Overview: Conditions: 150 mM KOAc, 10 mM MgCl2 and 150 mM bicine (pH 8.5), 24 C. An RNA of 177 nucleotides, treated with DMS and 2A3 and read out base by base.
RNA sequence: GGGAACGACUCGAGUAGAGUCGAAAAAUCCCAGAUAGCCUUUGACCGUGACGCUUCAUCUUGGUUUUUUCCUGAUUAAAUAGUUGACUCUGGCCCAUAUAUGCCGAAAAGGCAAGUUUUUUUGAUGCUCACUGGAGUUUUUCGAAACUCCAGUGAGAAAAGAAACAACAACAACAAC
Reactivity to DMS in 0.01 (KOAc 150mM, MgCl2 10mM, bicine 150mM(pH8.5), 24C), signal-to-noise 1, nucleotides 027 to 126: a200u000c000c010c020a090g000a060u010a040g000c020c040u000u030u000g000a080c010c010g000u000g000a030c060g000c050u010u000c020a040u010c010u000u000g000g000u000u000u000u000u000u000c010c000u010g000a170u030u040a100a080a130u040a020g000u000u000g010a090c040u000c000u000g000g010c020c000c010a170u020a020u000a080u000g010c020c000g000a010a090a090a160g020g000c020a020a080g000u100u000u000u000u000u000u000g000a190u040g040
Reactivity to 2A3 in 0.01 (KOAc 150mM, MgCl2 10mM, bicine 150mM(pH8.5), 24C), signal-to-noise 3, nucleotides 027 to 126: a000u000c000c000c000a010g050a040u150a030g020c000c000u080u020u050g030a080c000c060g060u060g070a060c030g000c040u000u030c030a040u000c010u060u100g030g000u060u060u000u050u010u060c000c030u060g120a200u040u220a140a070a090u150a040g030u020u060g020a020c010u010c040u080g030g020c000c000c000a040u110a030u050a000u180g040c000c000g080a150a100a020a010g000g040c000a030a010g000u000u020u000u000u000u010u100g140a110u130g020
For DMS, 1,972 sequencing reads were counted. High DMS reactivity at an A or C suggests that its Watson-Crick edge is free.